[RMDB]
Background: The record gives the reactivity of an RNA of 177 nucleotides to DMS and 2A3. Conditions: 150 mM KOAc, 10 mM MgCl2 and 150 mM bicine (pH 8.5), 24 C.
RNA sequence: GGGAACGACUCGAGUAGAGUCGAAAAGAUAUGGACGACCAUUGGAGAAGUAUUCGGAAACGAAUAUACUUCUAUGAAGAUGGUCCUAAGUCAAACACUGCGCCAGUGUUCGCACUGGCGCAGUGAACCAAUUAGUAAUGUUCGCAUUACUAAUUGGAAAAGAAACAACAACAACAAC
Reactivity to DMS in 0.01 (KOAc 150mM, MgCl2 10mM, bicine 150mM(pH8.5), 24C), signal-to-noise 3, nucleotides 027 to 126: g000a110u010a120u000g010g010a120c190g020a020c010c000a010u000u000g000g010a010g010a040a030g010u000a010u000u000c000g000g000a120a090a160c000g000a010a030u000a060u000a050c000u000u000c000u000a190u020g010a140a120g000a030u000g000g000u000c000c040u000a070a240g000u000c030a110a090a270c010a000c000u000g010c000g000c000c000a000g000u000g010u000u010c250g020c000a010c010u000g010g000c000g000c000a000g000u000g000a040a130
Reactivity to 2A3 in 0.01 (KOAc 150mM, MgCl2 10mM, bicine 150mM(pH8.5), 24C), signal-to-noise 3, nucleotides 027 to 126: g030a030u180a060u230g070g050a030c060g040a000c040c020a020u000u040g030g020a010g020a040a020g000u010a010u000u010c010g030g020a060a040a020c010g020a040a000u130a020u040a110c010u020u000c050u070a300u050g020a020a020g010a010u010g000g010u000c000c000u080a070a020g020u020c020a140a020a060c010a020c010u000g010c050g000c100c040a010g000u040g050u150u190c300g070c090a000c030u000g040g050c030g020c020a000g000u000g010a000a000
For DMS the reverse transcriptase was MarathonRT. The DMS profile rests on 4,325 reads.